[RMDB]
This 177-nucleotide RNA was probed chemically with 2A3 and DMS. In probing experiments dimethyl sulfate is read out at A N1 and C N3, which are open when not base-paired.
RNA sequence: GGGAACGACUCGAGUAGAGUCGAAAACGAGUUUCCUCUACGUUCUCCACCGCUCGUGAUGUCUUCCAAAAGGCAAUCAACGACGGCGCCAUUCAGGCGAAAAAGGACGAACUGGCCUUUUGGGAUGCAUACCAUCCAGCUUCGGCUGGAUGGUAUGAAAAGAAACAACAACAACAAC
Reactivity to 2A3 in 0.01 (KOAc 150mM, MgCl2 10mM, bicine 150mM(pH8.5), 24C), signal-to-noise 6, nucleotides 027 to 126: c080g010a040g060u010u040u020c020c010u040c060u070a040c050g000u010u010c020u000c000c000a040c020c010g020c080u040c000g000u010g010a030u050g030u010c020u070u040c070c050a140a090a000a000g010g000c040a080a270u060c050a120a070c020g020a000c020g020g010c000g000c000c000a150u300u300c090a060g000g040c030g010a100a010a030a010a010g080g020a050c120g020a050a080c110u060g090g010c010c010u010u070u070u080g050g000g020a030u140g030
Reactivity to DMS in 0.01 (KOAc 150mM, MgCl2 10mM, bicine 150mM(pH8.5), 24C), signal-to-noise 4, nucleotides 027 to 126: c090g010a080g010u010u000u010c020c000u010c070u050a140c120g010u000u000c010u000c000c020a130c020c030g020c090u000c030g010u010g000a030u020g000u020c050u000u010c130c180a090a040a050a000g000g000c000a020a130u020c040a110a090c000g000a120c120g000g010c030g010c000c000a140u080u030c250a200g000g000c010g000a020a040a040a120a100g000g010a060c170g000a090a100c080u020g020g020c010c010u000u010u040u000g010g000g020a030u040g000